The data come from the RNA Mapping Database (RMDB), library VIROID. Structure probing data (2A3) for a 207-nucleotide construct.

RNA sequence: GGGAACGACUCGAGUAGAGUCGAAAAGAAUCCUCCCCUGAGAGGCCUCUUCCUAGGUCCGGAGUCUACCUCCAUCCGGUCCGUCCGGGGCUUCUUCGCCGGGGGAGCCCCCUCUCCAUCUUUAUCCUUCUUUCCGAGAAUUCCUUUGAUGUUCCCCCGAGAUACUUAUGUUCGCAUAAGUAUCUCGAAAAGAAACAACAACAACAAC
Reactivity to 2A3 in 0.01 (KOAc 150mM, MgCl2 10mM, bicine 150mM(pH8.5), 24C), signal-to-noise 1, nucleotides 027 to 156: g050a020a120u120c000c020u000c000c000c000c030u070g030a020g050a000g000g020c000c000u050c030u250u100c050c080u100a080g010g010u000c000c000g040g050a050g020u090c100u130a250c090c010u110c060c010a070u000c040c000g040g000u000c000c000g010u000c000c040g000g020g000g020c000u030u030c010u080u010c040g140c150c030g040g000g010g010g000a000g020c010c000c000c070c000u020c000u040c030c010a070u000c030u040u160u140a170u180c000c000u000u130c020u020u100u050c000c020g020a020g020a130a040u070u090c070c000u130u070u280g070a070u060g010u000u000c000c000c000c000